[RMDB]
RNA sequence: GGGAACGACUCGAGUAGAGUCGAAAAGAUAUGGAGCCAGACAUGUCCUUGAUUCGGAAACGAAUCUUGGACAACAGCUGGUCUCCUAAGUCAAAGUACUUUGGCAGCUUCGGCUGCCAAAGUACAACAACCUCUUUUACUUCGGUAAAAGAGGUUGAAAAGAAACAACAACAACAAC
Reactivity to DMS in 0.01 (KOAc 150mM, MgCl2 10mM, bicine 150mM(pH8.5), 24C), signal-to-noise 2, nucleotides 027 to 126: g000a040u000a300u000g000g010a020g000c000c010a000g010a040c090a240u000g010u000c000c000u000u000g010a020u000u010c000g010g010a150a080a190c000g010a000a010u000c010u000u010g000g000a000c000a030a020c260a130g000c000u000g010g020u020c010u010c000c010u000a030a080g010u000c040a100a100a160g000u000a010c000u010u000u000g000g020c000a010g000c000u000u010c210g030g000c010u010g010c000c000a000a010a010g010u000a000c000a060a090
Annotation:
Structure probing data (DMS) for a 177-nucleotide construct. The reactions ran in a buffer of 150 mM KOAc, 10 mM MgCl2 and 150 mM bicine (pH 8.5), at 24 C.